[RMDB]
RNA sequence: GGGAACGACUCGAGUAGAGUCGAAAAGAUAUGGAAUUCUACAAACGAGGAUCUACUGUGUCGGAAACGACAUGUAGGGAGUUUGAGAAUUCCUAAGUCAAAACUACUGAGCUUCGGCUCAGUAGAAGUAAUACACAAAGUUCGCUUUGUGUAUUACAAAAGAAACAACAACAACAAC
Reactivity to DMS in 0.01 (KOAc 150mM, MgCl2 10mM, bicine 150mM(pH8.5), 24C), signal-to-noise 4, nucleotides 027 to 126: g010a010u000a010u020g000g000a020a000u000u000c000u000a090c010a000a010a000c000g020a100g000g000a010u010c000u000a010c000u020g010u000g010u000c000g010g010a000a010a020c010g030a000c000a000u000g000u000a000g010g010g000a010g010u000u000u000g000a030g010a020a010u000u000c000c000u000a000a080g000u000c010a130a100a160a300c010u000a000c000u000g010a010g000c000u000u020c290g040g010c000u000c000a010g010u000a000g000a050a110
Reactivity to 2A3 in 0.01 (KOAc 150mM, MgCl2 10mM, bicine 150mM(pH8.5), 24C), signal-to-noise 5, nucleotides 027 to 126: g000a000u010a000u040g000g000a000a010u000u010c010u080a300c010a010a010a000c020g060a300g110g000a000u000c000u000a010c020u090g020u010g010u040c000g000g000a000a000a000c000g000a000c000a010u020g000u000a000g000g010g000a030g000u010u000u000g010a000g000a000a000u000u000c000c000u000a000a000g010u000c000a010a020a120a210c000u000a000c010u000g000a000g010c010u050u240c300g180g000c000u020c010a000g000u000a000g000a010a010
The record gives the reactivity of an RNA of 177 nucleotides to DMS and 2A3.
The RNA was probed in 150 mM KOAc, 10 mM MgCl2 and 150 mM bicine (pH 8.5) at 24 C.
DMS adducts were read by reverse transcription with MarathonRT.
The 2A3 profile rests on 28,609 reads.